[RMDB]
RNA sequence: GGGAACGACUCGAGUAGAGUCGAAAAGUGGCAUCUGAGGUAGUAUGUAAUAUUGUAGACUGUCUAUAAUGUCCACAAUGUUUCAACUAACUCGGCUGUUCUAAACGCCCAUGGUUCGCCAUGGGCGGUAAGUGGAUUACUUCGGUAAUCCACUUACAAAAGAAACAACAACAACAAC
Reactivity to 2A3 in 0.01 (KOAc 150mM, MgCl2 10mM, bicine 150mM(pH8.5), 24C), signal-to-noise 4, nucleotides 027 to 126: g110u070g020g000c000a020u010c020u020g000a010g020g000u000a000g000u040a180u270g000u010a020a000u020a010u020u010g020u010a000g000a020c010u020g040u100c090u060a200u060a210a140u200g000u010c000c000a010c000a000a010u010g010u000u010u020c010a010a010c000u010a010a000c000u000c020g010g010c010u010g010u030u040c020u060a140a110a040c010g000c000c000c000a000u010g030g020u040u050c180g040c060c000a000u000g000g000g000c000g000
Reactivity to DMS in 0.01 (KOAc 150mM, MgCl2 10mM, bicine 150mM(pH8.5), 24C), signal-to-noise 4, nucleotides 027 to 126: g020u000g000g010c010a010u000c020u000g010a020g000g000u000a010g010u000a110u010g000u000a010a010u000a010u010u000g030u000a060g000a020c000u000g010u010c220u010a170u010a100a080u010g000u000c000c030a020c000a000a010u000g010u000u000u000c000a030a050c000u000a010a010c000u000c000g000g010c040u000g010u000u000c050u010a060a090a300c010g010c000c000c000a010u000g000g020u000u010c190g020c000c000a010u000g000g000g000c000g000
The record gives the reactivity of an RNA of 177 nucleotides to 2A3 and DMS.
The RNA was probed in 150 mM KOAc, 10 mM MgCl2 and 150 mM bicine (pH 8.5) at 24 C.
For DMS, 5,789 sequencing reads were counted.
The 2A3 profile rests on 6,909 reads.